[RMDB]
RNA sequence: GGGAACGACUCGAGUAGAGUCGAAAACCUUCUCUCGAGAUCGUCCGCAUCCUUUCUUGCCUGCACCCACUUUUCGAGGAUGUCUUCCCUUCCUCCCCUCCGGGAUUUCUUCUGAUCGGACUGGCUCACAGUGGAAGGUUCGCCUUCCACAAAAGAAACAACAACAACAAC
Reactivity to DMS in 0.01 (KOAc 150mM, MgCl2 10mM, bicine 150mM(pH8.5), 24C), signal-to-noise 9, nucleotides 027 to 129: c150c030u000u040c000u000c000u020c030g010a040g020a120u020c000g010u000c050c030g000c070a110u020c050c020u030u030u040c060u010u010g010c070c030u020g000c100a110c060c000c030a060c060u020u010u000u020c060g010a050g000g040a010u030g020u020c050u000u000c040c010c010u010u010c010c000u010c040c020c010c020u010c030c030g000g000g000a080u020u010u020c000u000u000c000u040g010a100u000c000g030g020a050c020u020g020g000c040u030c070a070c120a070
Reactivity to 2A3 in 0.01 (KOAc 150mM, MgCl2 10mM, bicine 150mM(pH8.5), 24C), signal-to-noise 9, nucleotides 027 to 129: c000c000u100u070c030u010c000u000c010g050a050g050a300u010c010g040u010c010c000g020c030a120u090c010c030u080u090u060c020u050u090g050c010c010u040g020c030a060c010c020c000a060c040u050u070u070u070c040g020a030g040g020a060u090g030u010c020u020u030c010c010c000u030u040c000c010u010c000c000c000c000u020c000c010g010g000g020a050u040u050u010c000u030u000c010u040g040a080u030c010g000g010a020c020u020g010g000c020u020c030a080c010a040